The record gives the reactivity of an RNA of 177 nucleotides to DMS and 2A3. Reactivities are given for positions 27 through 126. It was measured as part of the RMDB libraries RFM100 and RFMREP. 2A3 adducts were read by reverse transcription with SuperScript II with manganese.
[RMDB]
RNA sequence: GGGAACGACUCGAGUAGAGUCGAAAAAGCUCGCAAGGCGGACAAGGUUAGUAGCGAAGCGCACUAUAGCGACGGCCAUCGUUGUAGGUAGCAGAACUACUGAGUACGCUACUUGAUACGUGAAUCGUAGCCUACGUAAAUUCGUUUACGUAGGCUAAAAAGAAACAACAACAACAAC
Reactivity to DMS in 0.01 (KOAc 150mM, MgCl2 10mM, bicine 150mM(pH8.5), 24C), signal-to-noise 7, nucleotides 027 to 126: a100g010c020u000c010g030c090a070a090g010g010c040g020g020a070c060a080a120g010g020u010u030a030g020u000a010g000c040g010a300a120g000c020g000c160a300c020u010a020u000a020g010c020g010a040c030g000g030c130c110a150u000c010g010u010u000g020u000a020g000g000u010a300g020c000a020g000a200a140c030u000a040c050u010g010a120g010u000a050c060g000c010u010a040c030u000u000g000a060u020a060c070g010u000g000a070a110u020c070g010
Reactivity to 2A3 in 0.01 (KOAc 150mM, MgCl2 10mM, bicine 150mM(pH8.5), 24C), signal-to-noise 4, nucleotides 027 to 126: a000g010c010u010c010g050c020a000a060g030g000c010g030g000a020c030a010a090g210g110u130u120a010g020u010a010g050c010g050a070a000g030c000g020c030a040c050u010a000u020a040g000c000g040a030c010g190g020c010c010a030u020c000g020u020u010g010u010a000g000g040u080a030g000c010a010g030a020a010c000u040a010c010u030g000a020g040u040a020c010g010c010u050a090c000u040u060g050a020u060a160c070g030u070g100a050a070u140c070g030

For DMS the reverse transcriptase was MarathonRT. The RNA was probed in 150 mM KOAc, 10 mM MgCl2 and 150 mM bicine (pH 8.5) at 24 C.